[RMDB]
RNA sequence: GGGAACGACUCGAGUAGAGUCGAAAACAAGCGUCUGCCGGUGGUGGUGACUUCGAGUUGCCCGCCGAGGGUUUCGUUCGACUGCGCUUCGUCGGUUACUUCGAGACUGGCAAGAAGGAAUCGGAGUGGCAGGGCAAGAAGAAAGUCAACGACACCGGUCUCUGAAGAUAUUCGUAUCUUCAGAGACAAAAGAAACAACAACAACAAC
Reactivity to 2A3 in 0.01 (KOAc 150mM, MgCl2 10mM, bicine 150mM(pH8.5), 24C), signal-to-noise 8, nucleotides 027 to 156: c030a040a050g110c040g140u110c130u140g060c030c020g020g000u060g040g100u120g020g020u020g010a010c000u030u060c160g240a300g170u020u010g010c000c010c010g000c010c010g030a080g020g000g000u010u030u040c020g010u030u040c080g060a030c040u060g020c080g010c080u040u030c020g040u010c010g020g040u060u050a040c010u030u030c020g020a030g010a050c020u040g050g050c090a080a080g090a050a040g110g010a060a030u020c010g000g030a030g020u070g040g020c090a190g110g010g030c040a050a070g010a020a000g020a040a040a000g000u000c000a010a010c000g000a010c000a000c010c000g010
Reactivity to DMS in 0.01 (KOAc 150mM, MgCl2 10mM, bicine 150mM(pH8.5), 24C), signal-to-noise 4, nucleotides 027 to 156: c030a110a230g010c070g020u010c050u000g020c030c000g000g050u010g020g040u000g030g020u000g010a030c010u000u000c130g020a250g020u000u000g010c010c000c010g020c010c020g010a140g010g000g030u000u000u010c010g000u010u000c040g030a050c030u000g010c100g030c040u010u000c040g030u010c040g030g020u010u010a050c050u000u000c000g010a090g010a300c030u000g010g000c050a210a190g010a150a300g020g010a020a170u000c010g020g010a090g020u000g010g020c020a090g030g030g000c020a060a090g010a090a120g000a060a070a050g020u000c020a060a070c000g010a020c020a020c010c010g010

An RNA of 207 nucleotides, treated with 2A3 and DMS and read out base by base. For 2A3, 8,697 sequencing reads were counted.